Chemical mapping of a 207-nucleotide RNA with 2A3 and DMS. Values cover nucleotides 27 to 156. For DMS, 2,189 sequencing reads were counted. For DMS the reverse transcriptase was MarathonRT. The 2A3 profile rests on 1,789 reads.
RNA sequence: GGGAACGACUCGAGUAGAGUCGAAAAGGAAGCUUCGGCUUCCGUCAAGGGGUCUGCAGAAUCCCACGAGGAUCGAUGAACUACUCCUGAAGCCUCCACGGGAGCAUCGGGAGUGGGACUGCAGACGGAGGCACCCAUAGAUGCGAUUCGUCGCAAAUUUAUCCGAUGAUUUCGAUCAUCGGAUAAAAAAAGAAACAACAACAACAAC
Reactivity to 2A3 in 0.01 (KOAc 150mM, MgCl2 10mM, bicine 150mM(pH8.5), 24C), signal-to-noise 2, nucleotides 027 to 156: g000g000a010a020g010c020u060u100c230g130g000c000u020u000c050c000g000u000c040a130a130g100g010g040g020u000c000u000g000c000a010g030a130a300u090c000c090c000a010c020g030a300g020g000a000u010c020g000a000u010g020a110a120c080u200a060c000u300c000c000u020g000a050a020g010c020c000u000c000c000a000c010g000g010g000a000g030c000a000u010c010g000g010g000a010g000u000g000g000g010a010c000u000g000c000a000g010a000c000g000g020a000g000g000c010a020c000c000c000a050u180a080g220a090u070g000c010g010a010u040u130c170g070u020c040g110c000a000a080a030
Reactivity to DMS in 0.01 (KOAc 150mM, MgCl2 10mM, bicine 150mM(pH8.5), 24C), signal-to-noise 1, nucleotides 027 to 156: g000g000a040a020g000c000u010u000c260g010g010c000u000u010c000c020g000u000c100a100a070g000g000g000g000u000c000u000g040c010a050g000a030a300u000c010c020c000a020c000g010a220g040g000a060u010c070g010a040u000g020a150a170c170u010a300c010u000c000c000u050g010a050a070g020c030c010u000c010c000a300c010g000g010g000a060g000c040a020u000c010g000g000g000a020g020u000g000g020g000a090c010u000g000c010a000g000a030c060g040g040a020g000g000c000a020c010c000c070a130u000a080g000a110u010g010c000g020a140u000u010c160g020u000c050g010c040a020a020a120

Conditions: 150 mM KOAc, 10 mM MgCl2 and 150 mM bicine (pH 8.5), 24 C.